[RMDB]
RNA sequence: GGGAACGACUCGAGUAGAGUCGAAAAUGUCAUCGUCCACUCAGCCACUGGAUUUAAGCAGAGUUCAAGUAAGUACUGGUUUGGGGAGGAGGGUUGCAGCGGCCGAGCCAGGGUCUCCACCCAGGAACUCGUAAGAGCAAUUCGUUGCUCUUACGAGAAAAGAAACAACAACAACAAC
Reactivity to DMS in 0.01 (KOAc 150mM, MgCl2 10mM, bicine 150mM(pH8.5), 24C), signal-to-noise 3, nucleotides 027 to 126: u010g000u010c050a060u000c090g010u000c020c030a080c060u000c030a070g000c010c040a100c070u010g030g010a060u000u010u000a080a090g020c070a070g000a070g000u000u010c060a070a120g000u010a060a090g030u010a070c080u000g000g000u000u020u000g010g000g010g000a090g000g000a120g000g010g010u010u010g020c080a040g010c050g010g030c080c030g020a120g010c030c030a060g010g020g000u000c030u000c050c050a130c160c000c010a090g010g000a110a100
Reactivity to 2A3 in 0.01 (KOAc 150mM, MgCl2 10mM, bicine 150mM(pH8.5), 24C), signal-to-noise 2, nucleotides 027 to 126: u100g040u000c010a030u040c070g080u000c020c010a010c030u030c020a030g040c020c010a040c030u030g020g010a050u050u070u180a080a030g030c030a010g030a000g110u030u060c100a090a030g040u060a150a000g040u010a110c070u080g000g020u040u140u080g060g010g020g020a070g030g020a020g060g010g010u050u120g030c010a040g000c020g030g030c010c010g000a000g010c000c010a030g050g020g000u000c050u030c040c040a030c000c030c000a010g030g080a030a040
The data come from the RNA Mapping Database (RMDB), library OK2TRN. An RNA of 177 nucleotides, treated with DMS and 2A3 and read out base by base. The reactions ran in a buffer of 150 mM KOAc, 10 mM MgCl2 and 150 mM bicine (pH 8.5), at 24 C. High DMS reactivity at an A or C suggests that its Watson-Crick edge is free. Values cover nucleotides 27 to 126. For 2A3 the reverse transcriptase was SuperScript II with manganese.